[RMDB]
RNA sequence: GGGAACGACUCGAGUAGAGUCGAAAAGAUAUGGAGAGAGGUAGGGAGAGCCACUGUGUCGGAAACGACAUUGGCUCGAAGAACUACUCUCUCCUAAGUCAAACUCGACGACUUCGGUCGUCGAGAAUCAAUUAUACACCUUCGGGUGUAUAAUUGAAAAAGAAACAACAACAACAAC
Reactivity to 2A3 in 0.01 (KOAc 150mM, MgCl2 10mM, bicine 150mM(pH8.5), 24C), signal-to-noise 3, nucleotides 027 to 126: g020a020u030a010u080g000g000a020g000a010g000a010g060g250u210a040g060g040g050a290g010a010g060c000c010a040c130u100g020u010g000u050c000g000g000a030a010a000c000g000a010c010a020u000u030g000g020c010u000c020g040a190a130g030a000a000c000u000a010c000u000c000u000c000u000c010c000u000a000a000g000u000c010a020a030a170c010u010c000g000a000c030g000a000c020u040u170c300g220g000u010c000g010u000c010g000a000g010a020a010
Reactivity to DMS in 0.01 (KOAc 150mM, MgCl2 10mM, bicine 150mM(pH8.5), 24C), signal-to-noise 5, nucleotides 027 to 126: g000a010u000a100u010g000g000a020g010a020g010a040g020g020u000a000g000g010g010a070g020a010g010c000c000a020c300u020g020u000g000u000c000g010g010a020a020a080c000g030a000c000a010u000u000g000g010c000u000c000g030a070a100g000a170a300c010u000a070c000u000c000u000c000u000c000c000u000a000a040g000u000c010a150a140a260c000u000c000g010a020c000g000a010c000u000u030c250g030g010u000c000g000u000c000g010a000g000a060a080
The record gives the reactivity of an RNA of 177 nucleotides to 2A3 and DMS. It was measured as part of the RMDB library TTRDES. For DMS, 5,508 sequencing reads were counted. The RNA was probed in 150 mM KOAc, 10 mM MgCl2 and 150 mM bicine (pH 8.5) at 24 C. For 2A3 the reverse transcriptase was SuperScript II with manganese. For DMS the reverse transcriptase was MarathonRT.